[RMDB]
RNA sequence: GGGAACGACUCGAGUAGAGUCGAAAAAGCCGCUUACGAGCGGCAUGACGUCAUUCAGGAGAAGAAAGUUAGACUUUCGCCGAAGGAAUUACACUCUCAGGUGUCUUAAGACAGGACUGAUUGACAACUCUGACGAAUGAUUCGUCAUUCGUCAGAGAAAAGAAACAACAACAACAAC
Reactivity to 2A3 in 0.01 (KOAc 150mM, MgCl2 10mM, bicine 150mM(pH8.5), 24C), signal-to-noise 6, nucleotides 027 to 126: a000g030c020c010g000c010u040u050a070c220g060a010g000c000g010g010c010a000u050g020a010c040g010u000c000a000u000u020c020a000g050g040a150g030a110a040g040a020a040a010g040u120u160a070g060a170c000u020u010u020c010g000c000c000g030a050a030g040g030a040a010u130u100a090c070a020c040u040c010u010c040a050g000g010u010g000u030c010u140u230a170a080g020a030c010a030g020g040a020c010u000g010a020u000u010g000a000c020a020a050
Reactivity to DMS in 0.01 (KOAc 150mM, MgCl2 10mM, bicine 150mM(pH8.5), 24C), signal-to-noise 4, nucleotides 027 to 126: a100g000c020c000g000c000u040u020a130c140g040a080g030c000g020g030c010a040u030g000a100c180g000u000c000a000u000u000c010a010g020g020a170g000a050a200g000a010a010a040g000u020u000a160g040a300c000u000u000u000c000g000c020c070g000a110a150g000g030a000a090u000u060a060c180a270c090u010c030u000c080a300g020g030u010g010u000c000u020u040a120a110g000a020c030a170g020g010a230c000u000g000a000u000u020g000a010c020a100a180
Description:
The record gives the reactivity of an RNA of 177 nucleotides to 2A3 and DMS. For 2A3 the reverse transcriptase was SuperScript II with manganese. Conditions: 150 mM KOAc, 10 mM MgCl2 and 150 mM bicine (pH 8.5), 24 C.